[RMDB]
Annotation: Structure probing data (DMS and 2A3) for a 207-nucleotide construct. 2A3 adducts were read by reverse transcription with SuperScript II with manganese. The reactions ran in a buffer of 150 mM KOAc, 10 mM MgCl2 and 150 mM bicine (pH 8.5), at 24 C. Reactivities are given for positions 27 through 156.
RNA sequence: GGGAACGACUCGAGUAGAGUCGAAAACGUAGGUUCGAUCCCUACUGCCUCGACCAAUUAAGUGAGGAAAAUAUGAAAGGUAAUGUUUAUUUAGUAGUUCAUGAUUUAACAUUCUAUUUUAAUCACAAUGACACUGUUAUUUCUGAACGUGUAAUUAACCUCAUAAUUCAUUCGUGAAUUAUGAGGUAAAAGAAACAACAACAACAAC
Reactivity to DMS in 0.01 (KOAc 150mM, MgCl2 10mM, bicine 150mM(pH8.5), 24C), signal-to-noise 4, nucleotides 027 to 156: c130g000u000a050g000g030u000u010c120g010a300u010c120c000c010u000a030c050u000g020c060c000u000c020g030a200c080c030a100a150u000u010a080a140g020u020g010a060g010g010a050a090a070a090u000a080u000g000a050a090a080g000g010u000a080a130u010g010u000u000u000a080u020u000u010a150g010u010a090g020u000u000c040a040u000g020a050u000u000u000a010a010c020a080u010u000c050u000a100u020u010u000u000a050a130u010c090a060c100a070a110u000g020a090c080a060c120u000g000u000u000a020u000u000u010c010u000g000a040a040c050g020u010g010u010a030a100u000u000a160
Reactivity to 2A3 in 0.01 (KOAc 150mM, MgCl2 10mM, bicine 150mM(pH8.5), 24C), signal-to-noise 7, nucleotides 027 to 156: c050g000u010a010g030g030u100u080c040g030a050u080c010c000c000u000a010c010u040g030c000c000u000c020g080a080c040c060a170a100u240u160a250a030g040u060g050a020g020g050a080a040a030a020u240a070u110g070a090a080a030g080g020u120a130a060u060g030u030u100u050a180u070u130u070a100g050u060a020g000u020u000c020a040u230g010a010u000u010u000a000a000c000a020u180u040c020u030a090u070u130u050u130a140a160u150c030a040c050a160a100u160g000a000c010a000c030u000g000u010u010a010u000u000u000c000u010g030a010a010c020g040u040g030u060a040a080u070u110a020
Source information:
It was measured as part of the RMDB library OK3TST. Reactivities are rounded to 0.1 and cut off at 0 and 3.